[RMDB]
RNA sequence: GGGAACGACUCGAGUAGAGUCGAAAACUGCACGACGAUAGUGCAUACAUAUCCGUUGUGCACUUCACAUGUGUAACUUUACAUACGAGGAUGUAGAUUCUGUCCAACGAUAUUAGGACUACAUCCAACUCUCUAUGUACUUCGGUACAUAGAGAGUAAAAGAAACAACAACAACAAC
Reactivity to DMS in 0.01 (KOAc 150mM, MgCl2 10mM, bicine 150mM(pH8.5), 24C), signal-to-noise 4, nucleotides 027 to 126: c160u000g000c000a010c010g010a070c220g010a050u040a010g000u020g010c090a070u070a010c070a060u010a060u070c180c090g010u000u000g040u000g000c010a000c080u010u010c020a090c130a090u020g000u000g020u010a040a070c140u000u000u050a070c130a080u040a080c240g000a160g010g020a000u000g000u000a000g000a160u000u000c020u000g000u020c070c070a140a080c300g000a020u050a110u010u030a030g000g000a020c000u000a010c000a000u000c000c000a150
Reactivity to 2A3 in 0.01 (KOAc 150mM, MgCl2 10mM, bicine 150mM(pH8.5), 24C), signal-to-noise 9, nucleotides 027 to 126: c040u020g010c000a000c010g060a010c040g010a020u060a050g040u070g090c040a010u150a020c030a060u150a070u100c130c100g030u040u020g010u000g000c010a020c000u050u050c020a040c020a110u110g010u010g010u040a060a040c030u120u170u110a080c040a070u130a100c080g090a090g010g000a010u000g000u020a040g110a300u030u000c020u040g070u040c050c050a130a040c140g080a070u070a100u200u250a030g010g000a000c000u000a000c000a000u000c010c000a010